[RMDB]
RNA sequence: GGGAACGACUCGAGUAGAGUCGAAAAUGCUAAAACUAUGGAAGUCGGGGUUCUGCCUCUUCCUCUGUAGUAAUGCUAGCAUGGUACACACGAGAAGAAAAGUAAAUGCACUGGAUCUGUAAAAGACAACUAUCCAUUUCUUCGGAAAUGGAUAGUUAAAAGAAACAACAACAACAAC
Reactivity to DMS in 0.01 (KOAc 150mM, MgCl2 10mM, bicine 150mM(pH8.5), 24C), signal-to-noise 9, nucleotides 027 to 126: u010g010c000u010a020a090a090a070c010u000a010u000g000g010a020a060g020u000c170g000g000g000g010u010u070c270u060g010c000c000u000c010u000u000c000c050u000c010u000g010u000a000g000u010a070a120u040g020c130u010a020g000c010a010u000g000g020u010a080c070a090c100a090c090g010a100g010a100a080g000a050a060a060a060g000u020a050a070a070u020g010c060a040c060u010g020g010a120u000c020u010g010u030a040a070a080a100g010a100c180
Reactivity to 2A3 in 0.01 (KOAc 150mM, MgCl2 10mM, bicine 150mM(pH8.5), 24C), signal-to-noise 7, nucleotides 027 to 126: u030g000c010u010a010a010a070a030c000u000a010u010g030g000a010a020g020u020c040g000g000g010g010u120u160c120u260g060c000c000u020c000u010u000c000c010u000c000u010g010u000a000g010u030a060a110u120g080c060u010a010g010c000a010u020g020g070u200a030c070a000c010a000c090g070a040g050a230a030g070a040a110a050a010g080u140a050a150a110u100g040c020a020c080u040g040g020a040u020c020u040g050u120a080a110a020a000g070a030c040